[RMDB]
RNA sequence: GGGAACGACUCGAGUAGAGUCGAAAAGACGUGGAGGUUUCGCGCCCUCCUUUGCGCGUAAGUACGUCGAAAUUCGGUGCUGUGGAUCGCACCGUAUGAUCCAUUAGAUAUCCGCUGUGUGCCGCGGUUGGGCAUUUACACUUACCCGAAAGGGGAAGAUACGAUACUGCUUCGGCAGUAUCGUAUCAAAAGAAACAACAACAACAAC
Reactivity to 2A3 in 0.01 (KOAc 150mM, MgCl2 10mM, bicine 150mM(pH8.5), 24C), signal-to-noise 3, nucleotides 027 to 156: g030a010c050g010u080g030g110a040g070g020u040u060u080c010g000c010g020c040c010c000u100c020c000u090u060u100g060c000g000c020g010u020a070a040g070u020a040c020g000u020c030g020a000a040a050u110u060c000g000g020u000g010c050u030g040u120g100g030a110u090c030g010c000a030c010c020g000u030a040u040g010a030u000c000c000a030u080u120a020g080a090u050a050u060c000c040g020c140u060g010u020g010u040g100c010c010g050c040g060g000u120u120g020g000g030c000a030u030u040u070a040c080a020c020u090u100a020c000c030c000g050a080a030a040g030g000g000g000a020a020
Reactivity to DMS in 0.01 (KOAc 150mM, MgCl2 10mM, bicine 150mM(pH8.5), 24C), signal-to-noise 2, nucleotides 027 to 156: g020a030c030g020u020g020g000a090g000g000u000u010u000c050g020c080g030c100c080c110u000c040c060u000u030u010g010c030g010c010g010u020a060a170g010u010a010c030g040u010c020g020a060a050a150u000u010c020g010g040u000g040c010u000g030u010g030g010a050u000c100g020c010a210c090c020g040u000a050u000g010a130u010c020c030a090u000u000a100g000a160u000a100u000c000c050g070c080u000g040u000g060u000g020c010c100g000c020g030g050u000u000g010g010g000c020a110u000u000u010a110c080a080c080u000u000a160c000c000c000g000a080a130a190g020g010g010g020a060a050